[RMDB]
RNA sequence: GGGAACGACUCGAGUAGAGUCGAAAAUCGUCUUGCAUGAGGCGGCGCCGUGCUUGCCGGGCUUUGCAUCCCUAGCCGGUCGAAGGGGCCGCUGGGGUUAAAACUCGCAAGUUCCGGUGACAGAUCGGACGUUCCAAGUAUUCGUACUUGGAACGUCAAAAGAAACAACAACAACAAC
Reactivity to 2A3 in 0.01 (KOAc 150mM, MgCl2 10mM, bicine 150mM(pH8.5), 24C), signal-to-noise 1, nucleotides 027 to 126: u020c000g000u000c010u010u070g110c090a150u290g020a010g010g000c000g010g000c000g000c000c000g030u040g010c010u030u020g040c120c040g000g000g000c050u060u070u050g000c030a090u140c000c000c000u010a030g050c150c030g000g030u000c010g060a300a130g300g050g010g020c000c000g000c000u000g000g000g000g000u030u060a050a060a020a010c050u040c090g000c000a000a000g000u060u120c020c000g000g010u000g050a000c020a030g070a080u180c050g040
Reactivity to DMS in 0.01 (KOAc 150mM, MgCl2 10mM, bicine 150mM(pH8.5), 24C), signal-to-noise 1, nucleotides 027 to 126: u010c020g020u000c000u000u000g020c280a070u010g060a040g020g000c000g000g000c030g040c020c020g000u010g000c050u000u000g000c060c020g000g000g010c060u010u000u020g000c030a160u000c000c000c000u000a010g020c140c050g000g000u020c050g040a170a220g030g000g030g000c040c000g030c020u000g000g000g040g050u020u040a060a040a070a160c080u090c070g020c020a000a010g000u010u040c300c030g040g020u000g000a070c110a130g000a110u020c050g050
Structure probing data (2A3 and DMS) for a 177-nucleotide construct.
The RNA was probed in 150 mM KOAc, 10 mM MgCl2 and 150 mM bicine (pH 8.5) at 24 C.
For 2A3, 1,783 sequencing reads were counted.
For DMS, 1,743 sequencing reads were counted.
Reactivities are given for positions 27 through 126.